RNA sequence: GGGAACGACUCGAGUAGAGUCGAAAACGUCCUGUUAAGUCAGGCAACGAGCGAGACCCGCACUCCUAAUUGCCAGCAACACCCUCGUGGUGGUUGGGUACAUUAGGAGGACUGCCAGUGCCAAACUUCCCAUGUAAAUGUUCGCAUUUACAUGGGAAAAAGAAACAACAACAACAAC
Reactivity to 2A3 in 0.01 (KOAc 150mM, MgCl2 10mM, bicine 150mM(pH8.5), 24C), signal-to-noise 1, nucleotides 027 to 126: c010g210u190c000c000u000g030u030u120a220a160g300u130c040a000g010g000c020a010a000c050g090a030g030c020g040a040g080a140c000c040c110g000c010a040c000u030c000c000u000a000a020u000u020g010c000c020a000g010c020a000a000c020a020c000c010c050u210c130g040u190g010g000u010g000g000u020u010g010g020g000u050a070c090a050u010u010a010g000g000a000g030g000a000c020u100g040c020c030a040g000u030g100c000c030a070a070a050c030u000
Reactivity to DMS in 0.01 (KOAc 150mM, MgCl2 10mM, bicine 150mM(pH8.5), 24C), signal-to-noise 2, nucleotides 027 to 126: c120g000u030c000c010u000g010u010u000a040a200g030u000c020a040g000g000c070a050a080c080g010a050g020c060g050a110g010a070c020c020c030g000c120a270c010u000c000c000u010a000a000u010u000g000c000c000a050g000c000a000a050c010a050c010c010c000u050c300g020u010g020g080u020g010g000u000u000g000g010g000u010a000c160a040u000u010a030g000g000a010g000g000a050c110u000g020c030c080a100g040u000g010c070c100a120a100a090c210u010
An RNA of 177 nucleotides, treated with 2A3 and DMS and read out base by base. For DMS, 986 sequencing reads were counted. Source: RMDB library RFMREP, as collected in RNAgym.